An RNA of 177 nucleotides, treated with DMS and read out base by base.
For DMS, 798 sequencing reads were counted.
The data come from the RNA Mapping Database (RMDB), library OK2TST.
Conditions: 150 mM KOAc, 10 mM MgCl2 and 150 mM bicine (pH 8.5), 24 C.
[RMDB]
RNA sequence: GGGAACGACUCGAGUAGAGUCGAAAAGGAGGAGGAGGUGGACCUGGCUUGCACACCCACCGACGUGCGGGACGUGGACAUCUGAGGGCGCCAGGCAGGCGGGCGCCACCGCCACCCGCAGCGAGGGCGUUUCGCUAGGGUUCGCCCUAGCGAAACGAAAAGAAACAACAACAACAAC
Reactivity to DMS in 0.01 (KOAc 150mM, MgCl2 10mM, bicine 150mM(pH8.5), 24C), signal-to-noise 1, nucleotides 027 to 126: g010g030a070g010g020a060g030g010a060g000g040u000g020g020a050c060c010u000g000g060c040u000u020g050c070a120c120a090c080c020c020a120c090c050g040a100c160g030u010g010c030g000g000g010a080c180g000u010g000g000a150c100a110u020c200u020g010a110g000g000g000c030g000c040c020a060g000g000c060a050g070g000c060g010g030g000c050g000c000c070a110c070c030g000c030c160a110c020c010c000g030c080a070g000c080g000a120g010g030g020